[RMDB]
RNA sequence: GGGAACGACUCGAGUAGAGUCGAAAAGGAUUUUUCAAACUAUGAUAAACAUCUUCAUAGUGAAUUAAUGCAUGGAGCAUUUUCGAUCAUCAGAAAUGUUAUCCAAAAUGUCCAACCGGACGGAUGGCAUAGUCCGCAAUUUCGAUUGCGGACUAUGAAAAGAAACAACAACAACAAC
Reactivity to 2A3 in 0.01 (KOAc 150mM, MgCl2 10mM, bicine 150mM(pH8.5), 24C), signal-to-noise 2, nucleotides 027 to 126: g050g000a000u060u030u040u070u100c050a080a120a000c020u010a010u010g000a000u060a050a300a100c070a190u080c090u060u010c010a020u000a010g000u020g020a030a060u130u130a110a030u120g110c100a110u120g020g000a010g000c010a020u040u040u070u060c050g030a080u080c020a020u020c010a010g050a020a010a010u040g010u050u080a030u010c020c000a030a000a070a150u130g000u020c030c000a090a090c040c050g000g040a030c070g030g020a020u020g010g000
Reactivity to DMS in 0.01 (KOAc 150mM, MgCl2 10mM, bicine 150mM(pH8.5), 24C), signal-to-noise 4, nucleotides 027 to 126: g010g000a030u000u000u000u010u000c060a100a150a090c010u000a000u000g010a010u000a110a120a210c220a110u010c180u000u000c010a010u000a010g010u000g010a050a050u000u010a030a050u000g020c110a160u010g010g010a040g010c000a010u000u010u000u000c060g000a080u000c100a040u000c070a230g000a000a030a020u000g000u000u020a140u010c000c000a030a050a080a080u000g010u000c000c000a140a110c120c120g010g000a030c060g000g000a020u000g000g000